[RMDB]
RNA sequence: GGGAACGACUCGAGUAGAGUCGAAAAGAUAUGGAGCUCCCUUAGACAUGAAUCGGGAGUCGGAAACGACUCCGGAUUCAACAGCUAACAUGGGAGCUCCUAAGUCAAAGCAUACUUCGGUAUGCAACAAUAGCUUCAAGUUCGCUUGAAGCUAUUGAAAAGAAACAACAACAACAAC
Reactivity to 2A3 in 0.01 (KOAc 150mM, MgCl2 10mM, bicine 150mM(pH8.5), 24C), signal-to-noise 3, nucleotides 027 to 126: g040a010u090a100u150g000g000a000g020c000u010c010c000c000u000u030a080g030a080c080a170u200g030a020a010u020c150g190g000g000a000g000u000c000g000g040a060a070a020c010g000a000c000u000c020c020g010g000a000u020u010c010a010a020c020a020g100c020u060a070a080c070a300u220g000g000g010a000g000c010u000c000c000u010a010a000g000u000c040a070a040a020g000c000a000u010a000c010u040u060c120g090g000u000a000u010g000c010a010a000
Reactivity to DMS in 0.01 (KOAc 150mM, MgCl2 10mM, bicine 150mM(pH8.5), 24C), signal-to-noise 5, nucleotides 027 to 126: g000a060u000a300u010g000g000a040g020c010u000c000c000c000u000u000a030g020a090c110a300u010g000a020a010u000c000g010g020g000a010g010u000c000g010g000a090a090a170c000g010a010c000u000c000c000g010g010a000u000u000c000a020a060c290a210g000c050u020a020a080c300a100u010g010g000g010a010g010c000u000c000c000u000a010a100g000u010c030a100a120a190g000c000a020u000a000c000u000u020c220g030g000u000a010u000g000c000a090a110